[RMDB]
RNA sequence: GGGAACGACUCGAGUAGAGUCGAAAAGAAGUGUGAAUCAGGCGGUAUAGCGAUACCAGACUUCAAACUAUACUACAGAGCAAUAGUAACAAAAACAGCAUGGUACUGGUACCAAAACAGGCGGGUGCGUUAAUUGACGAUUCGUCGUCAAUUAACGAAAAGAAACAACAACAACAAC
Reactivity to 2A3 in 0.01 (KOAc 150mM, MgCl2 10mM, bicine 150mM(pH8.5), 24C), signal-to-noise 2, nucleotides 027 to 126: g070a040a000g060u060g010u040g100a010a060u060c020a020g090g050c020g060g000u090a090u060a080g020c030g030a020u000a060c010c010a010g060a070c030u040u010c080a060a000a000c050u070a060u040a090c040u020a030c030a050g090a010g020c020a050a020u030a040g060u070a050a080c050a060a120a010a010a000c010a020g050c040a050u040g040g010u080a110c010u020g020g010u030a010c030c030a040a020a030a070c030a000g080g000c020g010g000g030u060g000
Reactivity to DMS in 0.01 (KOAc 150mM, MgCl2 10mM, bicine 150mM(pH8.5), 24C), signal-to-noise 4, nucleotides 027 to 126: g010a060a070g020u000g010u000g000a090a080u010c080a100g030g030c040g000g010u000a030u000a070g020c090g020a110u000a070c050c020a080g010a070c080u000u000c100a080a080a080c050u000a070u000a040c040u000a100c090a090g010a050g000c070a100a080u000a040g010u000a040a080c130a030a060a050a050a060c130a040g000c070a060u000g000g000u000a040c040u000g000g000u010a060c070c050a020a020a050a040c130a050g020g010c030g000g000g010u000g030

An RNA of 177 nucleotides, treated with 2A3 and DMS and read out base by base. It was measured as part of the RMDB library OK2TST. The 2A3 profile rests on 4,029 reads. The DMS profile rests on 4,147 reads.